The record gives the reactivity of an RNA of 177 nucleotides to 2A3 and DMS.

RNA sequence: GGGAACGACUCGAGUAGAGUCGAAAAGGCGCGCGCCGGGACCUCCCACCGUCGGGGCGUCUGGCGGCUCGGCGGGCCAACGGGGCCGUGACCGGUAAAUGCGCUCCCUUGGCCGAGCGCGGAUGGACAUUACGUAAAUAUUCGUAUUUACGUAAUGAAAAGAAACAACAACAACAAC
Reactivity to 2A3 in 0.01 (KOAc 150mM, MgCl2 10mM, bicine 150mM(pH8.5), 24C), signal-to-noise 8, nucleotides 027 to 126: g080g000c010g000c000g000c010g000c030c000g010g000g040a090c000c030u020c010c010c000a030c010c010g030u020c010g010g010g030g230c080g120u080c110u080g100g060c000g000g090c010u000c000g010g000c000g010g000g000c020c000a020a010c050g000g000g010g000c040c020g040u040g050a090c030c040g010g020u110a100a130a050u170g010c050g000c020u040c010c000c000u020u040g030g000c010c020g040a060g030c040g000c040g030g040a120u110g050g020a010
Reactivity to DMS in 0.01 (KOAc 150mM, MgCl2 10mM, bicine 150mM(pH8.5), 24C), signal-to-noise 9, nucleotides 027 to 126: g010g010c060g010c020g010c090g010c010c010g010g000g010a150c100c070u000c030c010c020a300c030c020g020u000c050g010g010g010g010c150g010u010c070u010g010g010c110g010g000c010u000c010g010g010c020g020g000g010c030c030a040a040c240g000g000g000g010c040c020g010u000g000a250c060c050g010g000u000a040a100a060u000g010c070g000c000u000c010c010c040u000u000g000g010c010c030g000a070g010c020g010c010g010g000a100u010g000g010a300
Notes: The reactions ran in a buffer of 150 mM KOAc, 10 mM MgCl2 and 150 mM bicine (pH 8.5), at 24 C.